[RMDB]
RNA sequence: GGGAACGACUCGAGUAGAGUCGAAAAUAACCACCAACGCCUCCACGUUCCAUGGAACACUGCUACGAGAAUGUGGAUAUGCAGGCAGAGGCCUCCAGUUCGAAGCCCAGCAGUAGCAGCAAAGUGGCGUAUCGCACGGUUUCGACCGUGCGAUACGAAAAGAAACAACAACAACAAC
Reactivity to 2A3 in 0.01 (KOAc 150mM, MgCl2 10mM, bicine 150mM(pH8.5), 24C), signal-to-noise 2, nucleotides 027 to 126: u090a030a010c070c050a090c040c010a060a030c090g040c010c030u070c000c010a000c060g030u080u000c000c060a100u110g060g040a060a050c040a010c000u010g000c020u020a030c060g040a010g040a250a030u110g010u120g090g020a020u030a070u140g030c030a010g040g000c000a030g070a110g200g070c000c000u030c010c020a020g040u040u050c060g060a060a030g040c000c020c010a000g000c010a000g020u040a000g030c040a000g000c050a000a000a150g070u080g010g000
Reactivity to DMS in 0.01 (KOAc 150mM, MgCl2 10mM, bicine 150mM(pH8.5), 24C), signal-to-noise 2, nucleotides 027 to 126: u040a040a130c000c090a070c030c140a160a250c110g000c050c020u030c030c070a160c050g000u000u020c000c000a040u020g000g150a060a070c150a220c050u000g030c010u000a010c020g000a120g000a030a080u000g070u010g020g050a030u010a040u020g030c180a000g050g000c020a090g060a260g000g000c000c010u000c090c000a030g000u000u020c060g010a110a150g010c020c000c020a100g000c020a200g020u000a020g000c010a030g030c020a120a080a100g000u010g000g010